[RMDB]
RNA sequence: GGGAACGACUCGAGUAGAGUCGAAAAUACCGCAGGCCUGCGGUGCGGCAGUGUGGAGACCUGCCGUAAGCCGUGUUGUUUUGACAACCGGGAGAAAGCGUAUGCGGAGGCAGCGCUUUCAGUGUCUAAAAGUAUGGGAUCUUCGGAUCCCAUACAACCUAACGCUCCAGUUCGCUGGAGCGUUAGGAAAAGAAACAACAACAACAAC
Reactivity to 2A3 in 0.01 (KOAc 150mM, MgCl2 10mM, bicine 150mM(pH8.5), 24C), signal-to-noise 1, nucleotides 027 to 156: u060a050c020c010g050c070a070g000g290c030c110u010g000c010g010g000u010g000c000g000g060c000a000g000u040g000u110g270g040a090g020a050c030c040u020g000c010c010g000u020a050a010g110c070c020g040u040g000u050u000g020u000u190u030u160g050a010c070a110a070c040c020g080g000g060a050g020a000a000a000g000c000g010u000a300u190g040c000g000g110a020g280g130c000a010g010c000g010c020u000u000u000c020a020g050u010g000u050c020u070a120a150a020a000g000u000a000u010g010g000g000a000u010c010u000u140c230g010g000a000u000c000c000c000a000u000a000c000a000a000